Chemical mapping of a 177-nucleotide RNA with DMS. DMS adducts were read by reverse transcription with MarathonRT. In probing experiments dimethyl sulfate is read out at A N1 and C N3, which are open when not base-paired. It was measured as part of the RMDB library TTRDES.
RNA sequence: GGGAACGACUCGAGUAGAGUCGAAAAGAUAUGGACUGUGCUCGCGAUAAGCUGCAGUCGGAAACGACUGGCAGCUUUUGACGCGAUCACAGUCCUAAGUCAAACGAUAGAAGUUCGCUUCUAUCGAUCCAGAUGGUUACUUCGGUAACCAUCUGGAAAAAGAAACAACAACAACAAC
Reactivity to DMS in 0.01 (KOAc 150mM, MgCl2 10mM, bicine 150mM(pH8.5), 24C), signal-to-noise 1, nucleotides 027 to 126: g000a000u000a180u000g000g010a020c000u000g000u000g040c170u000c010g020c030g030a080u010a020a010g000c030u000g010c010a010g020u000c000g000g000a070a030a060c000g020a020c010u000g010g040c010a000g020c000u000u000u000u000g010a120c120g020c000g010a030u000c000a000c000a030g010u000c000c000u000a020a070g000u010c000a120a140a290c040g020a040u000a000g020a010a000g010u000u010c290g020c000u020u000c000u000a000u000c000g000a140